This 177-nucleotide RNA was probed chemically with DMS and 2A3. The 2A3 profile rests on 5,565 reads.

RNA sequence: GGGAACGACUCGAGUAGAGUCGAAAAAACAGCUGCACGUACGUUCGAGCAGUUUUCGAAAUAAACGUACGUACGAAAUAAAUAAAUUCUACUCGAUGCGAAACAAAGCAAAGUCGUUCCCAGGGAACCUGAUAAGGAUGUUCGCAUCCUUAUCAGGAAAAGAAACAACAACAACAAC
Reactivity to DMS in 0.01 (KOAc 150mM, MgCl2 10mM, bicine 150mM(pH8.5), 24C), signal-to-noise 2, nucleotides 027 to 126: a120a040c120a080g000c140u020g040c030a010c000g010u000a000c000g050u010u000c010g010a010g030c180a110g000u000u050u010u000c030g000a060a070a100u000a050a020a140c010g000u000a000c000g000u000a030c010g010a150a090a100u000a000a050a050u000a110a010a010u000u000c000u000a000c000u000c030g000a180u010g020c040g010a040a090a130c300a050a050a100g020c000a070a200a090g010u010c000g000u000u010c000c000c000a010g010g000g000a110a150
Reactivity to 2A3 in 0.01 (KOAc 150mM, MgCl2 10mM, bicine 150mM(pH8.5), 24C), signal-to-noise 4, nucleotides 027 to 126: a000a020c090a020g070c040u140g000c000a000c010g000u020a010c010g010u010u040c010g000a050g050c160a170g060u100u050u090u100c030g020a020a060a050u300a090a110a000c000g000u010a000c000g000u010a010c010g040a050a040a060u120a040a060a000u090a010a020a000u030u000c000u010a000c000u010c000g020a030u050g010c010g040a120a120a090c110a040a080a010g000c010a040a100a000g000u000c000g000u000u000c000c000c000a000g000g030g000a020a030
For 2A3 the reverse transcriptase was SuperScript II with manganese. As a SHAPE reagent, 2A3 marks flexible, mostly unpaired nucleotides at the ribose 2'-OH.